[RMDB]
RNA sequence: GGGAACGACUCGAGUAGAGUCGAAAACAACCACGACACCAACGAUGCGAACAAGGCUGCGUGGAGUCAUCUGCACAUGCUGACAUACUGCCGGCGACCGAGGUGGCGGUGGGCCGCUGAGACAUGACUCAGCGCCCAUUUUCGAAUGGGCGCUGAGAAAAGAAACAACAACAACAAC
Reactivity to 2A3 in 0.01 (KOAc 150mM, MgCl2 10mM, bicine 150mM(pH8.5), 24C), signal-to-noise 1, nucleotides 027 to 126: c030a020a000c010c030a050c030g000a030c010a050c020c010a010a000c070g060a070u120g010c040g060a070a050c050a170a080g100g040c010u020g050c040g020u040g060g000a050g040u040c070a070u000c070u060g060c050a030c000a070u130g040c000u030g000a040c030a080u200a050c040u040g010c050c000g000g020c020g040a070c030c000g030a030g050g070u020g000g050c000g100g030u000g000g040g030c030c010g050c050u060g050a040g010a030c040a080u200g000a070
Reactivity to DMS in 0.01 (KOAc 150mM, MgCl2 10mM, bicine 150mM(pH8.5), 24C), signal-to-noise 1, nucleotides 027 to 126: c100a120a280c000c010a040c080g010a040c120a000c080c020a040a180c230g000a230u000g020c070g000a040a030c200a130a140g000g040c040u000g030c020g090u000g000g000a060g000u000c110a060u000c040u000g020c070a050c160a040u000g060c060u000g030a080c100a050u000a090c120u010g010c060c010g010g000c060g040a040c070c000g000a120g000g040u020g000g020c050g040g000u000g040g000g020c000c020g010c010u000g010a220g010a190c050a060u000g000a170